[RMDB]
RNA sequence: GGGAACGACUCGAGUAGAGUCGAAAAAAAUAUUAUCUCUUCUUCAUGCAGUUCAUCAUGAGAAUGCACAAUGUUCUGCCUUGUAAGGUCGGUCUUAACCCUUUCUCUCAGGAUUGGGAUGAAAUGCAGAGAGUCUGUAAUUCGUUACAGACUCUCUAAAAGAAACAACAACAACAAC
Reactivity to DMS in 0.01 (KOAc 150mM, MgCl2 10mM, bicine 150mM(pH8.5), 24C), signal-to-noise 4, nucleotides 027 to 126: a030a040a060u010a050u010u010a070u010c020u000c010u010u000c020u000u010c060a080u010g000c030a040g000u000u000c020a040u000c060a080u010g020a140g010a090a050u000g010c300a060c120a090a050u000g000u000u000c010u000g010c030c070u000u000g000u010a080a070g000g020u000c070g000g000u010c030u000u000a070a120c040c010c010u000u000u000c010u000c060u010c130a110g010g000a120u010u000g010g000g010a040u000g000a030a030a040u000g020c220
Reactivity to 2A3 in 0.01 (KOAc 150mM, MgCl2 10mM, bicine 150mM(pH8.5), 24C), signal-to-noise 2, nucleotides 027 to 126: a000a010a000u240a030u080u060a150u040c010u010c000u070u000c000u010u040c020a040u040g000c010a020g000u010u040c010a040u000c010a060u150g030a050g070a170a060u110g050c070a040c020a080a070u050g020u010u020c010u010g020c000c010u060u030g080u100a000a050g020g020u020c030g030g000u020c010u070u150a160a170c000c010c000u010u020u020c040u000c010u000c020a060g080g090a240u070u060g080g000g000a000u060g040a000a080a000u110g000c000